RNA sequence: GGGAACGACUCGAGUAGAGUCGAAAAACAUGCUGGCCAACCCAACCCCACGAUCCUCCAUCGGCAUGAUCAUGAUGUGUUCUCAAAUAUCAGGCCAGUAAAUCACCAUGCUCGUGCUGUUAAAGGCAACUUAUGCCCAAGUUCGCUUGGGCAUAAACAGAUGGUCAGAAUUCGUUCUGACCAUCUGAAAAGAAACAACAACAACAAC
Reactivity to 2A3 in 0.01 (KOAc 150mM, MgCl2 10mM, bicine 150mM(pH8.5), 24C), signal-to-noise 5, nucleotides 027 to 156: a000c050a030u040g000c000u000g000g010c000c020a050a060c080c020c040a040a100c030c010c010c010a060c080g060a110u080c010c020u040c020c020a070u130c010g010g000c000a000u020g010a000u010c010a000u010g020a050u050g030u010g050u070u000c060u030c050a110a140a020u230a120u130c060a050g000g020c020c000a000g000u010a020a050a050u110c020a010c020c000a000u000g000c010u010c010g010u000g000c000u000g030u030u100a140a150a010g040g000c010a040a070c040u020u000a000u020g000c020c000c000a010a000g000u020u070c100g030c150u000u000g030g000g000c000a000u000a000a010a000
Reactivity to DMS in 0.01 (KOAc 150mM, MgCl2 10mM, bicine 150mM(pH8.5), 24C), signal-to-noise 2, nucleotides 027 to 156: a070c070a060u000g010c040u020g020g010c000c020a120a140c080c040c030a130a120c030c000c000c030a090c130g020a180u000c030c000u000c040c050a150u010c050g010g030c020a050u010g010a040u000c030a060u000g020a030u010g020u000g020u000u010c040u000c050a120a070a150u000a130u000c100a060g030g000c000c020a040g050u000a000a040a100u010c010a030c000c020a070u010g000c120u000c010g030u000g010c010u000g020u010u010a080a070a030g030g030c120a060a100c090u000u000a020u010g000c010c000c010a040a040g010u000u000c230g030c030u010u000g020g000g020c000a000u010a000a010a200

The record gives the reactivity of an RNA of 207 nucleotides to 2A3 and DMS.
The RNA was probed in 150 mM KOAc, 10 mM MgCl2 and 150 mM bicine (pH 8.5) at 24 C.
For DMS the reverse transcriptase was MarathonRT.
For 2A3, 3,798 sequencing reads were counted.